Notes:
Source: RMDB library ARCHII, as collected in RNAgym. Chemical mapping of a 207-nucleotide RNA with 2A3. For 2A3 the reverse transcriptase was SuperScript II with manganese. The reactions ran in a buffer of 150 mM KOAc, 10 mM MgCl2 and 150 mM bicine (pH 8.5), at 24 C.

RNA sequence: GGGAACGACUCGAGUAGAGUCGAAAAUAGGAUUCGACAAGAUUCAUGAAACUCAAGGUGCAUGCCCAGGGGCGGUUUGCCUGGUAAAAAGCCGCAAAACUAUAAUUGCUAACGACGAUACGUUCGCACUAGCCGCUUAGGCUAGCCAUCGCCUUGACAGUGGCUAUAUGUUCGCAUAUAGCCACUGAAAAGAAACAACAACAACAAC
Reactivity to 2A3 in 0.01 (KOAc 150mM, MgCl2 10mM, bicine 150mM(pH8.5), 24C), signal-to-noise 2, nucleotides 027 to 156: u160a020g050g000a010u050u080c050g070a080c140a150a100g040a090u110u070c060a060u170g030a140a040a050c070u000c020a000a030g010g040u030g010c090a030u050g020c020c010c000a000g000g010g000g020c000g000g040u050u000u090g000c000c000u060g010g020u080a010a030a030a040a000g010c030c000g000c010a130a030a000a100c160u180a070u110a300a170u160u100g000c000u010a020a000c000g110a020c060g060a020u070a140c050g020u000u040c010g000c040a030c030u010a000g000c020c010g100c300u280u250a040g000g000c000u000a000g000c010c000a060u050c000g040c030c000u000u010g020a010